This 177-nucleotide RNA was probed chemically with 2A3 and DMS. The DMS profile rests on 3,766 reads. For 2A3, 1,252 sequencing reads were counted. For 2A3 the reverse transcriptase was SuperScript II with manganese.

RNA sequence: GGGAACGACUCGAGUAGAGUCGAAAAGUAAACAGGUUGAGUAGAGUGUGAGCCGCUGCGAAACCAGCUCGAUUACGAGCCCUUGGCAGCGCGUCGGAAGGACGGGUCCCUGAAUAUAAAAAAGUAACAGACUGUAGUUAUUCGUAACUACAGUCUGAAAAGAAACAACAACAACAAC
Reactivity to 2A3 in 0.01 (KOAc 150mM, MgCl2 10mM, bicine 150mM(pH8.5), 24C), signal-to-noise 2, nucleotides 027 to 126: g120u130a020a100a060c060a050g000g050u050u100g070a010g010u080a030g020a060g000u110g000u010g100a010g030c040c030g020c050u050g010c050g120a090a040a030c000c010a000g000c000u000c000g120a220u130u300a120c020g010a010g000c000c000c000u040u060g080g000c000a000g000c040g030c010g040u000c020g030g090a040a070g060g010a020c010g030g000g040u020c010c000c050u000g060a170a000u200a020u130a150a180a020a020a010a010g080u070a130a010
Reactivity to DMS in 0.01 (KOAc 150mM, MgCl2 10mM, bicine 150mM(pH8.5), 24C), signal-to-noise 4, nucleotides 027 to 126: g010u000a050a090a090c090a050g000g000u000u000g010a120g010u010a070g010a090g020u000g010u010g010a140g020c060c040g020c000u010g010c000g010a030a010a040c070c270a170g010c010u000c000g010a280u000u000a120c080g000a020g000c000c100c060u000u000g000g000c030a020g000c020g010c110g010u010c040g010g010a090a080g010g020a050c060g000g000g000u000c020c010c010u010g000a060a050u000a080u020a000a040a070a060a040a140g020u000a080a170
Description:
The reactions ran in a buffer of 150 mM KOAc, 10 mM MgCl2 and 150 mM bicine (pH 8.5), at 24 C.